Structure probing data (2A3) for a 207-nucleotide construct. Values cover nucleotides 27 to 156.
RNA sequence: GGGAACGACUCGAGUAGAGUCGAAAAUUCGUGUUGGUAUUCACUCAGUCAUGAGCUCCCAUGAGAUGCUGGGCAAGAUUGCCAAUACUCAGUCGUCUCUGGAUAUCGAGAAUGGGCCGAUCAUUGCGGCCGAUCUGUUCACUGUUAACGGCGAACAGUCUUGGAAAUUCUUCGGAAUUUCCAAGACAAAAGAAACAACAACAACAAC
Reactivity to 2A3 in 0.01 (KOAc 150mM, MgCl2 10mM, bicine 150mM(pH8.5), 24C), signal-to-noise 1, nucleotides 027 to 156: u100u070c100g000u040g000u040u000g080g030u050a060u000u080c040a080c040u080c000a000g050u070c050a110u050g070a070g170c110u120c040c010c040a010u180g030a000g050a030u080g020c010u020g000g000g000c040a040a160g020a220u230u230g070c070c030a000a000u030a010c010u140c110a050g210u120c000g000u020c030u020c010u050g210g020a040u020a120u130c050g030a000g050a120a230u150g080g000g070c000c000g020a040u150c080a110u090u300g060c000g000g010c000c000g000a000u000c010u020g010u000u000c030a060c050u000g000u140u190a180a000c030g000g000c020g010a000a000c020a000
Annotation
It was measured as part of the RMDB library OK3TST.